[RMDB]
RNA sequence: GGGAACGACUCGAGUAGAGUCGAAAACGGAUGUCGAUCCCCUCUCCCGUUCGGGAAAAGGGGGACUCCGGGACUCCCUGCAGGCUGGGCACGAAGCCCCCACCGGGCGCUCCCCUCGGCGGGCCGUUAAGCCUAUUGUUCGCAAUAGGCAAAAGAAACAACAACAACAAC
Reactivity to DMS in 0.01 (KOAc 150mM, MgCl2 10mM, bicine 150mM(pH8.5), 24C), signal-to-noise 9, nucleotides 027 to 129: c020g010g020a010u050g000u000c040g030a180u070c000c000c000c000u000c180u010c010c010c010g030u090u090c180g000g020g010a020a020a100a030g030g020g020g010g000a000c020u010c010c040g020g010g010a130c160u020c020c020c000u000g000c030a050g000g030c150u030g000g020g060c030a040c060g020a120a160g020c000c020c000c020c020a070c070c050g000g000g000c060g030c060u000c010c010c030c000u000c030g010g040c060g000g020g010c050c020g030u020u060a070a150
Reactivity to 2A3 in 0.01 (KOAc 150mM, MgCl2 10mM, bicine 150mM(pH8.5), 24C), signal-to-noise 9, nucleotides 027 to 129: c020g000g010a070u260g020u040c050g080a210u150c010c000c010c000u010c000u020c000c020c010g140u300u300c250g010g000g010a020a060a030a020g020g000g000g010g000a000c000u000c000c000g000g000g020a030c030u020c000c000c000u000g030c020a050g030g000c020u070g010g020g020c030a030c150g110a080a030g010c000c000c000c000c000a040c010c010g020g010g000c050g020c020u040c000c000c000c000u010c010g030g000c010g020g020g000c010c000g050u060u100a060a020

Chemical mapping of a 170-nucleotide RNA with DMS and 2A3. The 2A3 profile rests on 74,243 reads. The reactions ran in a buffer of 150 mM KOAc, 10 mM MgCl2 and 150 mM bicine (pH 8.5), at 24 C.